[RMDB]
RNA sequence: GGGAACGACUCGAGUAGAGUCGAAAAUAAAAUCGUAGGGCGAGACGAUCGACGUAAAUCGCUCAAACUACUCGAGACCAAAGGUAUACGCUUCGGUAACUCGCUCUAAUCCCGAGCGAUAAAUGAAUACUGUUUUAAUCUUCGGAUUAAAACAGUAAAAAGAAACAACAACAACAAC
Reactivity to DMS in 0.01 (KOAc 150mM, MgCl2 10mM, bicine 150mM(pH8.5), 24C), signal-to-noise 3, nucleotides 027 to 126: u010a080a080a100a110u000c010g000u000a040g020g000g000c030g010a020g010a040c070g000a040u000c010g020a110c030g030u000a020a080a070u000c080g020c080u010c110a090a080a150c090u000a050c070u000c040g010a020g020a130c060c040a070a090a080g010g010u000a050u010a030c020g000c100u000u000c080g000g000u000a070a100c040u000c000g010c010u000c000u000a120a140u000c050c000c020g000a030g000c010g000a040u000a030a080a100u010g000a100a080
Reactivity to 2A3 in 0.01 (KOAc 150mM, MgCl2 10mM, bicine 150mM(pH8.5), 24C), signal-to-noise 3, nucleotides 027 to 126: u040a010a050a000a010u020c010g000u020a030g000g000g040c010g000a010g010a020c050g030a040u070c040g030a050c020g020u050a020a080a060u070c060g020c040u040c060a040a040a020c030u070a050c010u000c050g020a030g000a030c010c040a120a020a000g100g000u130a100u020a140c020g040c060u040u080c030g010g010u000a020a030c010u000c000g000c020u010c000u010a020a070u030c000c000c010g010a010g000c000g020a040u090a070a150a040u110g090a070a010